Chemical mapping of a 177-nucleotide RNA with 2A3.
Values cover nucleotides 27 to 126.
It was measured as part of the RMDB library OK1LIB.
RNA sequence: GGGAACGACUCGAGUAGAGUCGAAAAAUGGCCAGCCAACUUUUGCAUGUUUUGUAGAGAUGGGGUCUCACAGUGUUGCCCAGGCUGGUCUCAAACUCCUGGGCUCAGGCGAUCCACCUGUCUCAGCCGCAAUCAGCACUUUCGAGUGCUGAUUGCGAAAAGAAACAACAACAACAAC
Reactivity to 2A3 in 0.01 (KOAc 150mM, MgCl2 10mM, bicine 150mM(pH8.5), 24C), signal-to-noise 1, nucleotides 027 to 126: a000u200g000g030c000c000a010g030c040c000a070a040c100u020u170u300u100g050c110a110u100g060u090u270u190u060g060u080a010g000a000g040a080u020g040g100g000g100u010c150u040c000a140c000a050g180u200g060u300u160g020c000c000c000a000g060g000c140u110g050g040u000c000u000c010a010a070a000c050u060c000c000u000g000g000g000c000u000c040a010g000g000c000g010a020u050c020c040a010c010c000u010g000u130c020u010c070a040g000c000